[RMDB]
RNA sequence: GGGAACGACUCGAGUAGAGUCGAAAAGGUCUUGACUUGGAGAUAGCUCUGAAUUUGAGACAGUUACCUGGUGGACAGCAUGAGUGUGGGUGUAACAGAGUAGCAGGUGGAGCUUAGAGUACCUGAGGAGAUGUAUCAACCAAGAAGCAAGGAGUUAGAUAUUACGGGACUUCGGUCCCGUAAUAUCAAAAGAAACAACAACAACAAC
Reactivity to 2A3 in 0.01 (KOAc 150mM, MgCl2 10mM, bicine 150mM(pH8.5), 24C), signal-to-noise 2, nucleotides 027 to 156: g080g010u010c040u030u020g050a040c010u040u050g020g010a120g080a120u110a090g040c010u010c040u050g140a160a110u070u090u080g040a060g000a020c020a040g040u060u060a050c010c000u060g070g010u040g040g000a030c010a010g020c110a050u100g020a040g050u110g020u060g000g040g010u020g010u020a060a030c030a020g100a060g050u160a000g030c040a020g060g000u020g000g030a030g000c000u010u020a020g010a010g060u030a080c000c040u010g000a060g020g050a040g000a040u110g020u050a110u100c020a030a040c000c000a040a050g000a030a000g010c010a000a040g150g000a020g050u040u100a020
Reactivity to DMS in 0.01 (KOAc 150mM, MgCl2 10mM, bicine 150mM(pH8.5), 24C), signal-to-noise 1, nucleotides 027 to 156: g040g040u000c000u010u000g010a100c040u000u010g010g040a050g020a190u000a140g010c000u000c000u020g020a080a090u000u010u010g000a100g070a010c000a190g040u000u000a080c160c010u000g060g000u000g040g000a140c030a050g020c130a080u010g020a090g030u000g040u000g000g000g000u000g020u000a060a170c120a040g000a080g020u000a040g020c030a040g000g040u000g160g020a140g020c050u000u000a110g000a120g010u000a020c020c060u010g040a150g050g080a070g000a100u040g020u010a070u000c110a050a190c060c030a170a110g010a090a060g000c010a030a090g000g010a090g000u010u010a170